Source: RMDB libraries RFM100 and RFMREP, as collected in RNAgym. Chemical mapping of a 177-nucleotide RNA with DMS and 2A3. For 2A3 the reverse transcriptase was SuperScript II with manganese.

[RMDB]
RNA sequence: GGGAACGACUCGAGUAGAGUCGAAAAUUGCCUCGAAGAUUAAGCCAUGCAAGUCUGUGAAUAUAUGAAACAGUGUACGGCUCAGUAUAACACCUAUAUCUACCCACUUUUUAAAUAUAACCAUGGUAGGUACAACAAAUUUCGAUUUGUUGUACCUAAAAGAAACAACAACAACAAC
Reactivity to DMS in 0.01 (KOAc 150mM, MgCl2 10mM, bicine 150mM(pH8.5), 24C), signal-to-noise 3, nucleotides 027 to 126: u020u000g000c010c010u020c080g040a100a130g000a110u000u020a070a100g010c030c010a070u010g000c070a070a090g020u020c010u000g010u000g000a080a090u000a100u040a060u020g010a160a130a050c050a020g010u000g010u000a100c080g000g020c030u000c060a050g020u010a030u000a070a130c050a070c020c010u000a050u000a050u000c030u000a100c000c030c020a090c090u010u020u000u000u010a060a060a080u020a090u010a110a070c110c080a060u040g000g000u000
Reactivity to 2A3 in 0.01 (KOAc 150mM, MgCl2 10mM, bicine 150mM(pH8.5), 24C), signal-to-noise 6, nucleotides 027 to 126: u070u070g080c010c010u060c060g060a080a020g010a090u170u170a050a000g010c010c010a020u100g020c040a050a030g070u050c010u020g030u050g050a120a020u120a060u070a070u290g110a140a050a000c020a010g010u020g010u090a030c060g010g000c010u010c030a050g030u070a050u040a150a010c030a030c000c010u010a010u010a010u060c010u030a050c000c010c020a030c070u100u050u030u060u120a070a190a020u180a030u030a050a040c050c020a020u040g050g010u040